An RNA of 177 nucleotides, treated with 2A3 and DMS and read out base by base. It was measured as part of the RMDB library VIROID.
RNA sequence: GGGAACGACUCGAGUAGAGUCGAAAACGGGGCAACUCUUCUCAGAAUCCAGCGAGAGGCGUAGGAGAGAGGGCCGCGGUGCUCUGGAGUAGAGGCUUCUAGCUUUCAAAACACCAUCAAUCGUCCCCAUAUAGUCAAUGUUCGCAUUGACUAUAUGAAAAGAAACAACAACAACAAC
Reactivity to 2A3 in 0.01 (KOAc 150mM, MgCl2 10mM, bicine 150mM(pH8.5), 24C), signal-to-noise 6, nucleotides 027 to 126: c030g040g060g030g000c020a070a100c040u010c000u120u020c020u000c000a040g290a050a090u050c040c020a060g160c130g140a300g020a030g300g000c050g060u140a020g030g030a010g000a000g010a040g030g070g010c030c020g070c080g020g010u020g000c010u010c010u020g010g000a020g020u030a010g010a010g050g010c010u160u110c050u200a060g000c000u180u300u140c030a030a040a020a040c010a000c110c040a020u040c000a000a100u080c030g040u020c010c000c010
Reactivity to DMS in 0.01 (KOAc 150mM, MgCl2 10mM, bicine 150mM(pH8.5), 24C), signal-to-noise 7, nucleotides 027 to 126: c100g020g000g010g020c030a110a080c010u000c010u000u000c000u000c040a130g000a230a160u010c020c020a150g020c210g010a160g010a060g010g010c200g010u000a080g000g000a030g010a050g000a060g010g000g020c010c020g020c120g010g000u000g010c020u000c010u000g000g010a050g010u000a080g000a030g000g000c020u000u010c200u000a050g010c010u010u000u010c020a020a080a110a100c020a020c120c010a040u000c070a080a160u010c090g000u000c000c000c010
The reactions ran in a buffer of 150 mM KOAc, 10 mM MgCl2 and 150 mM bicine (pH 8.5), at 24 C. 2A3 adducts were read by reverse transcription with SuperScript II with manganese.